[RMDB]
The record gives the reactivity of an RNA of 177 nucleotides to DMS.
It was measured as part of the RMDB library OK1LIB.
DMS adducts were read by reverse transcription with MarathonRT.
Conditions: 150 mM KOAc, 10 mM MgCl2 and 150 mM bicine (pH 8.5), 24 C.
RNA sequence: GGGAACGACUCGAGUAGAGUCGAAAAGCUCGGAGACGAGCAAGGCUGACAAAACUUUGUCCCAACCUCCACGUGGUGUCGGCUGGAUAAUGCUGCAUUAUGUUGCAUUUAUCAACUGGGAAUCAAAGAUCGACUACCAUUUCGAUGGUAGUCGAUCAAAAGAAACAACAACAACAAC
Reactivity to DMS in 0.01 (KOAc 150mM, MgCl2 10mM, bicine 150mM(pH8.5), 24C), signal-to-noise 1, nucleotides 027 to 126: g000c030u020c000g060g000a270g000a070c020g100a000g010c040a030a100g000g000c000u000g070a040c000a120a040a050a060c090u000u000u000g010u000c000c000c000a120a140c040c020u000c030c020a240c150g000u020g000g000u030g000u040c000g000g000c000u000g000g040a000u000a010a000u020g000c000u000g080c030a000u040u000a210u110g010u010u000g000c000a010u000u000u000a040u020c000a000a150c050u050g000g000g000a190a070u040c090a020a220a290